[RMDB]
RNA sequence: GGGAACGACUCGAGUAGAGUCGAAAAUGUGAAUCUCGCGGGAGUCCAGUCCGAAUUCCUCCAAGCUGUAGCGGUGGGUUGAUUCGUGCCCGCUGCCCGAGGCGGCCGCCGCGAACGCCUCGGCGGCGUAAUGCUCAGCAUUCGUGCUGAGCAUUACAAAAGAAACAACAACAACAAC
Reactivity to 2A3 in 0.01 (KOAc 150mM, MgCl2 10mM, bicine 150mM(pH8.5), 24C), signal-to-noise 9, nucleotides 027 to 126: u210g050u050g050a070a070u040c020u020c040g030c020g010g020g010a070g040u030c030c020a020g040u030c020c020g040a050a060u100u030c000c010u020c020c010a090a040g010c040u100g050u230a030g030c030g030g030u050g010g030g030u040u110g060a130u080u060c070g030u100g040c020c000c010g000c000u000g000c000c010c000g010a010g000g000c000g010g000c020c030g050c020c000g010c020g020a040a020c000g000c000c000u000c000g000g000c000g010g000c020
Reactivity to DMS in 0.01 (KOAc 150mM, MgCl2 10mM, bicine 150mM(pH8.5), 24C), signal-to-noise 7, nucleotides 027 to 126: u030g010u030g020a080a070u020c030u010c040g020c060g000g000g010a110g000u000c030c030a060g010u010c030c030g010a100a130u010u010c030c020u000c050c070a090a130g010c060u010g000u010a070g020c040g000g030u000g000g010g010u000u020g000a120u010u010c070g000u010g000c040c000c010g020c010u000g000c090c020c020g010a020g000g010c010g010g010c060c070g010c020c030g000c030g010a070a070c010g000c000c000u000c000g010g010c030g000g010c030